[RMDB]
RNA sequence: GGGAACGACUCGAGUAGAGUCGAAAAACGCCAUCGUUUAGCUUCCAAAAAAGUUAUUCAGUGGGAAGAUUUAACAGAUGAACAACUUGCCCUAUUUGAUCCUAGUUUCAUGGUUCACCAUUUAGUGCUUGAAGCUUGCGAGCGUCACCAAGUCAGAGGAGUAUAGCACUUUCGAGUGCUAUACUCCAAAAGAAACAACAACAACAAC
Reactivity to 2A3 in 0.01 (KOAc 150mM, MgCl2 10mM, bicine 150mM(pH8.5), 24C), signal-to-noise 1, nucleotides 027 to 156: a020c030g020c010c000a100u020c000g020u000u000u300a010g000c030u000u000c000c000a130a000a130a000a000a000g120u200u070a120u030u050c030a030g040u120g070g040g070a060a170g050a270u170u200u150a040a030c030a030g130a100u030g000a050a010c030a050a020c050u000u100g020c040c010c000u120a150u050u040u090g050a050u000c000c020u030a110g110u150u100u090c120a100u170g000g070u080u060c020a040c050c020a050u020u010u030a020g000u020g030c020u040u000g000a000a000g000c000u000u010g020c040g000a030g000c000g030u010c010a040c010c030a030a000g050u080c040a000g020a050

Chemical mapping of a 207-nucleotide RNA with 2A3.
Source: RMDB library OK3TST, as collected in RNAgym.
Conditions: 150 mM KOAc, 10 mM MgCl2 and 150 mM bicine (pH 8.5), 24 C.